Chemical mapping of a 177-nucleotide RNA with 2A3 and DMS. DMS (dimethyl sulfate) methylates the pairing face of unpaired adenines and cytosines. For DMS the reverse transcriptase was MarathonRT. For 2A3, 477 sequencing reads were counted. The RNA was probed in 150 mM KOAc, 10 mM MgCl2 and 150 mM bicine (pH 8.5) at 24 C. The data come from the RNA Mapping Database (RMDB), library RFM100.

[RMDB]
RNA sequence: GGGAACGACUCGAGUAGAGUCGAAAAGCGUCAUGAAACCAUGAGGUCCGACCAGGCGCAUUAACUUGUCCUCGUAGGCGUCCGUCCUACGUCCGACAAGACGACCAAAACACCCCGUGUCUCGCUGUAUAAACGGCGACUUCGGUCGCCGUUUAUAAAAAGAAACAACAACAACAAC
Reactivity to 2A3 in 0.01 (KOAc 150mM, MgCl2 10mM, bicine 150mM(pH8.5), 24C), signal-to-noise 1, nucleotides 027 to 126: g020c020g070u070c080a190u130g020a160a100a030c010c000a000u190g030a090g020g070u000c000c000g030a040c000c010a020g000g010c090g000c020a050u120u160a040a110c000u000u000g000u030c000c000u050c040g010u000a020g000g000c010g160u170c080c050g070u110c100c000u000a000c000g010u070c040c060g000a040c000a000a000g020a030c110g160a080c000c000a020a130a000a000c090a100c010c000c000c000g000u000g040u040c040u020c020g000c000u080g040
Reactivity to DMS in 0.01 (KOAc 150mM, MgCl2 10mM, bicine 150mM(pH8.5), 24C), signal-to-noise 1, nucleotides 027 to 126: g000c040g000u000c040a230u050g000a230a120a110c070c000a050u020g000a050g040g000u000c000c010g000a250c040c050a070g000g000c300g120c010a200u000u000a120a280c000u000u000g000u000c000c060u000c000g040u000a020g000g000c170g000u070c190c270g000u010c000c000u220a000c000g000u000c110c300g000a110c000a040a000g000a160c070g000a290c000c000a000a150a010a050c170a210c040c000c000c000g040u000g000u000c000u000c020g000c060u090g000